[RMDB]
RNA sequence: GGGAACGACUCGAGUAGAGUCGAAAAUUGUAGUCACUCCUCUUGUUUCAGCAGGCAUAUUUGGUGUAAAACCAGCUGUGUCUUUUGAUUAUCUUAUUAGGGAGGCUAAGACUAGAGUUUUAGUCGUACUAUGAUCAGGGUUCGCCCUGAUCAUAGUAAAAGAAACAACAACAACAAC
Reactivity to 2A3 in 0.01 (KOAc 150mM, MgCl2 10mM, bicine 150mM(pH8.5), 24C), signal-to-noise 2, nucleotides 027 to 126: u020u030g170u040a010g020u000c010a000c090u010c010c020u020c020u040u100g070u050u040u010c000a000g040c000a020g000g040c000a010u000a010u010u010u010g110g000u030g010u070a070a140a010a020c000c000a020g030c010u020g010u010g020u000c000u090u030u010u000g020a000u020u100a090u100c050u090u100a130u130u190a110g030g010g000a020g010g010c030u080a080a020g000a000c020u000a020g000a020g070u020u030u030u060a110g030u050c060g000u000
Reactivity to DMS in 0.01 (KOAc 150mM, MgCl2 10mM, bicine 150mM(pH8.5), 24C), signal-to-noise 1, nucleotides 027 to 126: u000u000g000u000a030g000u000c000a180c110u000c010c010u000c110u000u000g010u010u000u000c010a040g000c090a020g000g000c000a010u000a020u010u000u000g010g000u000g020u020a080a080a140a030c000c000a010g000c060u000g030u000g010u000c000u010u000u000u010g000a040u000u000a040u020c100u010u010a090u000u000a140g000g010g010a030g000g040c170u000a060a070g010a010c000u000a040g000a050g000u000u020u000u000a120g020u000c060g010u000